[RMDB]
RNA sequence: GGGAACGACUCGAGUAGAGUCGAAAAUUGAACUACAUGCUUGACCAUAGAAGAAAAUGCAGAUUAAUGCUGCAUUUUAUGACAUAAAAUACAGCAGCGAUAGUUAGUAGUUAUGAUAGCCUUCGGGACGGAUGACACCAUUCGUGGUGUCAUCCGUAAAAGAAACAACAACAACAAC
Reactivity to 2A3 in 0.01 (KOAc 150mM, MgCl2 10mM, bicine 150mM(pH8.5), 24C), signal-to-noise 2, nucleotides 027 to 126: u050u020g030a000a000c000u010a010c000a030u130g000c000u050u010g000a030c000c010a060u070a100g180a060a070g000a050a070a000a000u000g000c000a000g000a000u180u280a040a000u300g000c000u050g030c000a000u000u000u080u080a090u090g130a000c000a040u290a000a130a060a050u250a120c100a030g080c000a020g000c170g040a020u050a020g000u000u030a130g000u000a000g000u070u120a110u180g150a070u030a040g050c000c030u000u000c020g040g000g000
Reactivity to DMS in 0.01 (KOAc 150mM, MgCl2 10mM, bicine 150mM(pH8.5), 24C), signal-to-noise 1, nucleotides 027 to 126: u010u000g010a080a030c020u010a000c010a140u000g000c000u000u040g000a260c300c020a030u000a090g010a110a190g000a000a020a010a000u000g000c000a020g000a060u020u030a070a070u030g030c000u000g000c000a000u000u020u000u000a010u000g000a230c160a090u060a110a000a060a090u070a040c100a010g010c040a100g000c060g040a080u000a010g000u000u000a120g030u010a000g030u000u010a080u000g020a000u000a100g010c010c000u000u020c050g020g000g000
The record gives the reactivity of an RNA of 177 nucleotides to 2A3 and DMS. For 2A3 the reverse transcriptase was SuperScript II with manganese. Conditions: 150 mM KOAc, 10 mM MgCl2 and 150 mM bicine (pH 8.5), 24 C. For 2A3, 542 sequencing reads were counted.